The data come from the RNA Mapping Database (RMDB), library RFM100.
Structure probing data (2A3 and DMS) for a 177-nucleotide construct.
The 2A3 profile rests on 1,373 reads.
DMS adducts were read by reverse transcription with MarathonRT.
RNA sequence: GGGAACGACUCGAGUAGAGUCGAAAAUACUAACCAAGCUAUCUGUAUCCUGAUGCCGCUCCAGAAGUUGGGAUGUAUCUUGUGAUAGCUGGGUUUUAUAAGUGCAAUAUUAAAGUAAACCAUGAGUGUAGUGCGAUUAGUUCGCUAAUCGCACUACAAAAGAAACAACAACAACAAC
Reactivity to 2A3 in 0.01 (KOAc 150mM, MgCl2 10mM, bicine 150mM(pH8.5), 24C), signal-to-noise 3, nucleotides 027 to 126: u060a040c100u060a050a020c000c000a020a010g000c000u000a000u000c010u070g050u150a120u180c030c000u000g000a000u000g010c030c070g090c020u050c020c020a120g020a270a070g200u220u130g000g010g000a020u050g000u000a010u000c010u010u140g020u180g020a000u000a000g000c000u000g010g000g000u000u000u060u040a190u020a100a050g100u050g130c040a060a020u060a070u080u240a140a070a130g130u060a020a050a020c050c060a110u080g050a030g200u010
Reactivity to DMS in 0.01 (KOAc 150mM, MgCl2 10mM, bicine 150mM(pH8.5), 24C), signal-to-noise 1, nucleotides 027 to 126: u000a030c160u000a010a000c060c020a050a000g000c000u060a000u000c000u020g070u010a000u000c000c000u000g000a000u000g000c200c060g020c210u090c060c120a100g010a080a300g000u000u020g080g000g030a000u000g000u000a050u010c120u010u000g060u050g000a000u000a000g000c000u000g000g020g000u000u000u090u000a000u000a100a020g000u000g020c080a270a030u080a000u000u010a170a250a220g060u000a060a080a190c010c010a130u050g050a130g020u000